[RMDB]
This 207-nucleotide RNA was probed chemically with 2A3 and DMS. Conditions: 150 mM KOAc, 10 mM MgCl2 and 150 mM bicine (pH 8.5), 24 C. Values cover nucleotides 27 to 156.
RNA sequence: GGGAACGACUCGAGUAGAGUCGAAAAAACAGUGGCUCUAAAUUGUGGAAAUCUUCUUGUAAGAUGGUAACAGCAGAAGUGGAGAAACCGGUUCUUGAAACAAUGGUCUUGAAAUAGUGGGAAUAGAGGAAUAUAGUUUCAUUUACAAAGACAGGAAUGCACUAAUCCAUUUCGAUGGAUUAGUGCAAAAAGAAACAACAACAACAAC
Reactivity to 2A3 in 0.01 (KOAc 150mM, MgCl2 10mM, bicine 150mM(pH8.5), 24C), signal-to-noise 2, nucleotides 027 to 156: a000a000c080a030g000u060g020g000c010u010c000u060a060a110a040u180u140g000u060g000g060a040a060a040u040c040u090u000c000u010u200g050u200a060a030g040a020u020g000g050u010a050a010c000a020g010c010a010g000a090a040g080u030g030g030a030g010a040a050a000c060c030g010g000u020u040c000u040u060g070a010a050a080c030a070a100u070g010g040u010c000u000u030g040a040a030a020u070a020g020u050g040g040g000a050a020u070a070g040a000g030g030a040a010u060a010u000a030g010u000u060u050c020a020u040u050u010a030c040a060a110a060g240a000c060a010g250g010a060a120
Reactivity to DMS in 0.01 (KOAc 150mM, MgCl2 10mM, bicine 150mM(pH8.5), 24C), signal-to-noise 1, nucleotides 027 to 156: a050a010c050a100g030u000g000g010c020u000c040u000a050a080a140u000u000g040u000g000g010a050a060a040u000c020u000u010c020u010u000g000u000a030a020g010a060u000g040g000u010a060a070c050a110g000c020a040g010a050a140g020u010g000g010a120g070a090a090a040c040c050g010g020u010u010c020u010u000g000a150a060a090c020a060a060u000g010g030u000c070u000u000g020a090a040a060u000a060g020u000g040g000g010a070a070u000a110g020a060g000g010a050a060u000a170u000a120g000u000u010u010c030a020u000u000u000a140c090a060a110a070g000a100c030a020g000g000a080a150
Overview
For 2A3, 752 sequencing reads were counted. For DMS the reverse transcriptase was MarathonRT. The data come from the RNA Mapping Database (RMDB), library OK3TST.